[RMDB]
RNA sequence: GGGAACGACUCGAGUAGAGUCGAAAAGGCGUAGCCGACAACAUGCCCCGGUAGCCCAGACCUUCAAGGCUACGGUGCGUUGCGACGCACGGUCUGAUUCUUCACAACGACGUUCACCGCGUCUUCUACAACCGGCAAAGAUUCGUCUUUGCCGGAACAAGUAUACGAGUUUCGACUCGUAUACUUGAAAAGAAACAACAACAACAAC
Reactivity to DMS in 0.01 (KOAc 150mM, MgCl2 10mM, bicine 150mM(pH8.5), 24C), signal-to-noise 2, nucleotides 027 to 156: g000g010c030g030u000a080g050c050c010g040a210c020a040a100c020a130u010g000c020c030c030c020g040g000u000a050g000c020c000c050a150g020a130c050c040u010u010c070a110a150g030g000c000u000a010c000g010g060u020g000c020g040u000u000g020c000g030a170c010g020c060a090c000g040g020u000c040u000g000a230u000u000c030u000u000c060a090c040a090a080c030g020a030c010g010u000u010c060a070c080c060g000c020g030u000c020u000u000c020u000a100c060a100a180c020c010g000g000c010a010a020a000g000a100u000u000c300g010u010c000u000u000u000g000c010c000g000g000a000a030
Reactivity to 2A3 in 0.01 (KOAc 150mM, MgCl2 10mM, bicine 150mM(pH8.5), 24C), signal-to-noise 8, nucleotides 027 to 156: g050g000c050g060u070a030g020c030c010g120a060c040a080a030c020a080u180g030c020c000c000c010g130g050u040a010g010c000c010c040a050g030a100c020c060u130u100c080a060a030g000g000c000u000a000c010g000g000u010g000c010g010u000u070g030c110g070a010c020g010c020a020c020g020g010u010c020u010g030a050u110u040c050u120u130c070a050c030a210a090c090g020a000c000g050u140u180c060a070c200c020g010c000g010u010c040u060u030c030u100a110c040a150a090c000c010g000g000c000a000a000a000g000a010u050u140c190g040u000c110u010u000u000g000c000c000g000g000a010a000
Chemical mapping of a 207-nucleotide RNA with DMS and 2A3. 2A3 adducts were read by reverse transcription with SuperScript II with manganese. The data come from the RNA Mapping Database (RMDB), library M2RFPK. The RNA was probed in 150 mM KOAc, 10 mM MgCl2 and 150 mM bicine (pH 8.5) at 24 C. Values are in units of 0.01, from 0 to 300, in steps of 10. The 2A3 profile rests on 8,333 reads. For DMS, 6,556 sequencing reads were counted.